[RMDB]
RNA sequence: GGGAACGACUCGAGUAGAGUCGAAAACUGUGGUGGCUUCGGCCACCACAGAAAAACGAUGUUCCGCUGCAAUGAAGAGAUCAUUGGCAUGAACAUCUGAAAAGCCAAAUUCCUUCGGGAAUUUGGCGCUUAUCAUUUUCUUCGGAAAAUGAUAAGCAAAAGAAACAACAACAACAAC
Reactivity to 2A3 in 0.01 (KOAc 150mM, MgCl2 10mM, bicine 150mM(pH8.5), 24C), signal-to-noise 3, nucleotides 027 to 126: c000u010g000u020g000g020u000g020g000c010u050u060c300g070g030c020c020a000c000c000a000c000a000g000a010a000a000a000a000c030g010a000u010g010u010u000c010c010g010c030u000g000c010a000a040u030g020a080a070g130a070g020a250u050c000a010u010u030g150g020c020a000u080g000a000a000c010a010u010c000u000g030a120a130a010a020g010c000c000a000a000a000u010u010c010c000u020u050c180g070g000g000a000a000u010u010u010g000g000c000
Reactivity to DMS in 0.01 (KOAc 150mM, MgCl2 10mM, bicine 150mM(pH8.5), 24C), signal-to-noise 3, nucleotides 027 to 126: c000u000g040u000g010g050u000g010g010c010u000u010c240g030g020c000c000a000c010c000a010c010a000g000a020a040a080a100a100c170g000a010u000g010u000u000c000c020g000c030u000g000c010a010a010u000g010a040a210g020a160g020a140u000c000a000u000u000g010g000c090a000u010g000a040a010c000a010u000c010u010g000a050a070a080a160g010c000c000a000a010a010u000u000c000c000u000u010c240g000g010g010a010a000u000u000u000g010g010c000

This 177-nucleotide RNA was probed chemically with 2A3 and DMS. The RNA was probed in 150 mM KOAc, 10 mM MgCl2 and 150 mM bicine (pH 8.5) at 24 C.